Chemical mapping of a 207-nucleotide RNA with 2A3 and DMS. It was measured as part of the RMDB library OK3TST. DMS adducts were read by reverse transcription with MarathonRT. For DMS, 6,232 sequencing reads were counted. The RNA was probed in 150 mM KOAc, 10 mM MgCl2 and 150 mM bicine (pH 8.5) at 24 C.
RNA sequence: GGGAACGACUCGAGUAGAGUCGAAAAAAAUGAAAAGAGGGAACAUUAAUUCUUUUUCAGUGCUGUGCGGGUGCGUAUGAGCUCAAGAAGCUGCGGCUUCUUUCCAAAACCUGGCUCUGACUCUGGCCUGCUCCAUGACUUUGGGCUGGUCGUGGACACCAUAAAUGAUAUUCGUAUCAUUUAUGGUAAAAGAAACAACAACAACAAC
Reactivity to 2A3 in 0.01 (KOAc 150mM, MgCl2 10mM, bicine 150mM(pH8.5), 24C), signal-to-noise 3, nucleotides 027 to 156: a000a000a000u140g010a040a030a030a060g090a060g020g030g020a070a030c050a060u130u180a150a110u190u170c030u050u130u050u040u070c030a020g010u020g050c010u010g030u040g070c020g000g010g020u030g010c010g010u050a050u100g050a000g010c020u030c080a020a010g000a010a000g000c030u030g040c080g170g000c010u030u010c000u020u050u000c040c010a030a040a050a080c010c030u030g050g000c010u000c030u060g040a050c010u000c010u060g010g010c010c010u030g020c060u010c000c010a020u040g020a030c030u080u080u060g010g010g000c040u030g000g020u010c000g010u020g010g010a000c010
Reactivity to DMS in 0.01 (KOAc 150mM, MgCl2 10mM, bicine 150mM(pH8.5), 24C), signal-to-noise 2, nucleotides 027 to 156: a060a050a080u010g010a060a030a030a050g010a020g000g010g010a100a100c060a100u010u000a060a090u020u000c020u000u010u010u010u000c020a120g040u000g030c000u000g030u000g020c070g030g020g000u000g000c050g030u000a070u000g020a080g020c010u000c130a030a100g010a050a090g020c020u000g040c220g080g020c010u000u000c010u000u000u010c090c030a050a050a090a100c070c060u000g010g040c000u010c030u000g000a060c050u000c000u010g010g010c020c020u000g010c040u010c010c020a020u010g000a040c050u010u000u000g030g000g020c060u000g020g010u010c000g030u000g010g010a120c170